[RMDB]
RNA sequence: GGGAACGACUCGAGUAGAGUCGAAAACUACAUGCUUUUGCAUGUAGAGCAUGCUUUUGCAUGCGAGCCACGUGAGGAUGUGAGGACCUUUUUUUGGUGCGUGGCAGUCAUCAGCUUUUGGACUUUUGUCCUUGCUGAUGUCUGGACCUCAAUCCGACAGUACUCCAUGCUUCGGCAUGGAGUACUGAAAAGAAACAACAACAACAAC
Reactivity to 2A3 in 0.01 (KOAc 150mM, MgCl2 10mM, bicine 150mM(pH8.5), 24C), signal-to-noise 1, nucleotides 027 to 156: c000u000a010c000a000u000g070c030u010u000u280u300g030c090a000u010g010u000a000g000a000g020c000a000u010g010c040u000u140u240u300g000c010a000u000g000c030g070a050g000c000c010a020c000g020u010g100a060g000g000a030u000g110u100g280a000g010g000a000c000c000u040u030u110u030u020u110u300g040g000u090g040c000g000u020g000g060c000a000g010u010c000a000u000c000a000g020c010u050u160u210u090g000g000a000c020u080u120u230u300g000u000c000c000u000u020g010c000u000g000a000u000g000u000c000u010g030g000a010c010c000u040c000a000a000u010c000c020g010a030
Conditions: 150 mM KOAc, 10 mM MgCl2 and 150 mM bicine (pH 8.5), 24 C. Structure probing data (2A3) for a 207-nucleotide construct. The 2A3 profile rests on 686 reads.